[RMDB]
RNA sequence: GGGAACGACUCGAGUAGAGUCGAAAAGGAACCGUUCGACCGCGAACUGUUUGGCGGCAUUGUGGGUUGGUGUGACAGCGAAGGUAACGGCGAAUGGGUGGUGACCAUCCGCUGCGCGAAGCUGCGGCUAUCCCGUAACUUUCGAGUUACGGGAUAGAAAAGAAACAACAACAACAAC
Reactivity to DMS in 0.01 (KOAc 150mM, MgCl2 10mM, bicine 150mM(pH8.5), 24C), signal-to-noise 7, nucleotides 027 to 126: g010g020a100a100c020c030g010u000u000c030g010a150c050c060g010c040g010a070a090c040u000g010u000u000u000g010g010c020g010g000c060a050u000u000g020u010g010g020g000u010u010g010g010u000g020u010g000a110c050a110g000c030g010a080a100g010g010u010a150a120c040g010g010c010g000a040a030u000g000g000g000u000g000g010u000g010a170c020c020a070u010c010c010g010c010u000g000c040g010c110g010a100a160g000c020u000g010c030g010g010
Reactivity to 2A3 in 0.01 (KOAc 150mM, MgCl2 10mM, bicine 150mM(pH8.5), 24C), signal-to-noise 5, nucleotides 027 to 126: g060g000a020a030c030c000g020u020u020c090g080a220c040c010g050c030g070a090a040c030u100g130u150u080u080g080g000c020g000g020c050a050u050u180g070u160g070g110g030u100u150g040g000u070g020u030g040a060c040a080g010c030g030a060a010g060g000u040a080a010c010g010g000c020g010a040a020u050g050g010g010u020g010g020u030g030a040c000c010a010u010c010c000g000c020u030g010c040g000c030g060a090a030g000c010u020g010c010g000g000

Chemical mapping of a 177-nucleotide RNA with DMS and 2A3.
2A3 adducts were read by reverse transcription with SuperScript II with manganese.
It was measured as part of the RMDB library OK2TST.